[RMDB]
RNA sequence: GGGAACGACUCGAGUAGAGUCGAAAAACGUGAUCGUACGUUCGAGAACGUACACACACGAGUGUACGUGUUCACGAGUACACACGUGUGAUCGUGAACUCUCGAGAGAUCACUCUCGAACGAGUACGUGUUCGAGUUCGAGAACGAUCACGUGUUCGACUAUUUACGGGUUCGCCCGUAAAUAGUCAAAAGAAACAACAACAACAAC
Reactivity to DMS in 0.01 (KOAc 150mM, MgCl2 10mM, bicine 150mM(pH8.5), 24C), signal-to-noise 2, nucleotides 027 to 156: a000c010g000u000g000a030u010c000g060u000a160c040g000u010u000c010g010a120g000a230a050c020g010u000a010c000a090c010a140c080a110c150g000a170g020u000g000u000a000c010g020u000g020u010u020c090a220c030g010a110g020u000a040c010a020c000a080c140g000u000g030u010g000a010u010c020g030u010g030a070a060c060u000c030u010c010g010a110g020a090g020a200u020c250a100c030u000c010u000c010g000a040a030c040g000a160g010u010a030c050g030u010g030u000u000c040g010a130g000u000u010c030g040a110g000a100a030c000g020a030u000c000a010c020g030u000g000u000u010c050
Reactivity to 2A3 in 0.01 (KOAc 150mM, MgCl2 10mM, bicine 150mM(pH8.5), 24C), signal-to-noise 9, nucleotides 027 to 156: a000c000g000u000g000a010u000c010g000u060a070c040g040u030u010c000g000a000g010a040a000c010g030u070a020c040a010c000a000c010a030c090g080a120g030u020g010u010a020c040g050u040g120u170u130c100a050c100g020a030g040u100a020c000a000c010a020c090g040u060g000u000g080a080u040c020g010u030g050a030a030c010u000c010u000c060g010a010g000a010g010a090u150c090a080c200u010c000u000c000g020a070a040c060g000a020g060u130a080c080g070u130g050u070u050c020g010a030g010u020u050c060g000a070g030a070a000c000g000a000u000c000a000c000g000u010g010u020u120c040
Source: RMDB library OK3TST, as collected in RNAgym. Structure probing data (DMS and 2A3) for a 207-nucleotide construct. For DMS the reverse transcriptase was MarathonRT. Reactivities are given for positions 27 through 156.